[RMDB]
RNA sequence: GGGAACGACUCGAGUAGAGUCGAAAAUCCUAAGUCUUUCGACAUGCUCUAGAGGUGACCAUCGAUCUGGUCGGAAACGACCAGGGAGGUCACCGAUUGGAGCAACAGCGAAAGAUAUGGAAAAAUCGCAAGGCUGAGGUUCGCCUCAGCCUUGCGACUUACAUCUUGGGUUCGCCCAAGAUGUAAGAAAAGAAACAACAACAACAAC
Reactivity to DMS in 0.01 (KOAc 150mM, MgCl2 10mM, bicine 150mM(pH8.5), 24C), signal-to-noise 1, nucleotides 027 to 156: u000c050c030u010a050a220g050u000c000u000u000u000c000g020a070c070a300u010g020c000u000c010u020a100g000a300g020g000u000g000a000c000c000a300u000c160g030a070u020c000u000g000g010u000c000g030g000a090a090a300c040g010a000c010c000a050g010g000g030a070g020g000u000c000a000c000c000g010a010u040u030g020g000a000g030c020a010a080c080a150g000c000g000a010a060a010g000a020u000a230u010g050g020a080a040a090a190a100u000c000g080c020a050a070g000g000c010u000g080a030g050g060u010u000c300g000c040c000u000c020a000g040c000c000u000u010g000c010g050a020